RNA sequence: GGGAACGACUCGAGUAGAGUCGAAAAAUCCGAUAUAUUAAGGGAAUAUUGGCUGUUAAAGGACUCGUUGAUCAGCGAAGACAGCGCCAAGAAGCGAGACAGAUGCCAACUGUCCUCGUGUACAUUAAUUAAUCCUAGGGUUCGCCCUAGGAUUAAUAAAAGAAACAACAACAACAAC
Reactivity to 2A3 in 0.01 (KOAc 150mM, MgCl2 10mM, bicine 150mM(pH8.5), 24C), signal-to-noise 1, nucleotides 027 to 126: a000u000c000c000g020a000u040a000u000a030u270u280a100a050g070g000g020a070a080u040a080u150u020g010g010c030u060g020u090u080a110a250a060g050g050a080c020u000c000g000u000u030g110a180u110c070a010g020c030g020a030a000g020a000c010a010g030c020g050c010c000a020a060g040a130a010g050c000g000a010g020a000c000a000g100a060u200g070c020c010a010a020c020u020g010u010c000c020u000c010g010u030g070u030a070c090a070u060u220a180
Reactivity to DMS in 0.01 (KOAc 150mM, MgCl2 10mM, bicine 150mM(pH8.5), 24C), signal-to-noise 4, nucleotides 027 to 126: a100u010c000c000g000a120u010a050u000a110u020u020a160a110g010g010g010a080a070u010a080u000u010g000g000c020u010g010u000u000a060a110a110g000g000a140c050u000c010g010u000u000g010a140u000c150a100g010c020g020a090a090g020a110c140a100g000c030g020c020c050a060a060g000a140a200g000c010g000a020g000a100c030a040g000a090u010g000c100c140a050a120c100u010g010u000c060c040u010c020g010u000g010u010a060c170a060u000u010a070

The record gives the reactivity of an RNA of 177 nucleotides to 2A3 and DMS. The RNA was probed in 150 mM KOAc, 10 mM MgCl2 and 150 mM bicine (pH 8.5) at 24 C. Source: RMDB library OK2TST, as collected in RNAgym. The DMS profile rests on 2,968 reads.